[RMDB]
RNA sequence: GGGAACGACUCGAGUAGAGUCGAAAAUGCGCGCUAAAUUAGGAUUUUCCGAGAGUGAUAGUCAGGAUAAUGACUUAUUGACCGGGUUAUUAAGUUUGAUGAUCAAAGAAGGGCGCGAUUAUACCCGGUCAUGCUAUGGAUUCGUCCAUAGCAUGACAAAAGAAACAACAACAACAAC
Reactivity to DMS in 0.01 (KOAc 150mM, MgCl2 10mM, bicine 150mM(pH8.5), 24C), signal-to-noise 2, nucleotides 027 to 126: u020g020c020g040c000g030c010u000a050a100a120u000u010a150g000g010a140u010u000u010u000c010c010g020a130g010a130g020u000g000a040u000a100g010u000c000a040g020g010a140u020a110a070u000g000a030c020u000u010a040u000u000g000a040c090c040g000g000g010u000u010a010u000u010a050a090g010u000u010u020g010a110u000g010a070u000c050a040a090a090g010a110a150g010g000g020c050g010c020g000a050u000u010a070u010a070c010c020c000g000
Reactivity to 2A3 in 0.01 (KOAc 150mM, MgCl2 10mM, bicine 150mM(pH8.5), 24C), signal-to-noise 1, nucleotides 027 to 126: u070g000c010g000c050g000c030u030a120a070a160u120u110a130g060g090a040u000u060u120u190c030c000g060a090g000a010g080u080g000a030u020a010g000u000c010a030g060g070a080u070a190a220u000g010a000c000u000u090a030u010u050g050a060c070c030g060g000g010u070u010a120u050u020a140a010g060u080u150u020g050a050u070g010a070u120c060a070a070a090g110a090a060g080g020g000c040g030c010g020a010u110u000a030u050a050c000c030c000g030